[RMDB]
RNA sequence: GGGAACGACUCGAGUAGAGUCGAAAAUGUAGUCCUAGCUACUCAGGAGGCUGAGGCAGGAGGAUUGAGUCCUGGAGUUUCAGGAUACAGUGAGCUAUGAUCAUGCCAUUGCACUCCAGCCUGGGCAACAGAGCAAGAUUCUGUCUCUAAGAAAAGGCAAUCUUCCGGGAUUCGUCCCGGAAGAUUGAAAAGAAACAACAACAACAAC
Reactivity to 2A3 in 0.01 (KOAc 150mM, MgCl2 10mM, bicine 150mM(pH8.5), 24C), signal-to-noise 1, nucleotides 027 to 156: u230g000u040a030g020u000c000c000u010a040g050c000u020a060c040u000c180a100g100g000a000g120g000c030u090g070a000g000g000c000a020g000g020a010g110g040a070u090u160g070a070g080u040c010c000u010g130g010a130g090u080u210u300c020a010g020g020a030u100a100c000a000g040u020g030a050g090c070u060a050u090g060a100u260c110a020u190g060c000c000a010u060u010g060c100a100c020u000c010c000a000g000c000c010u040g000g000g070c010a020a020c000a030g030a020g080c050a130a000g010a120u090u000c000u020g020u030c000u000c020u040a060a080g100a070a160a000a000g020g000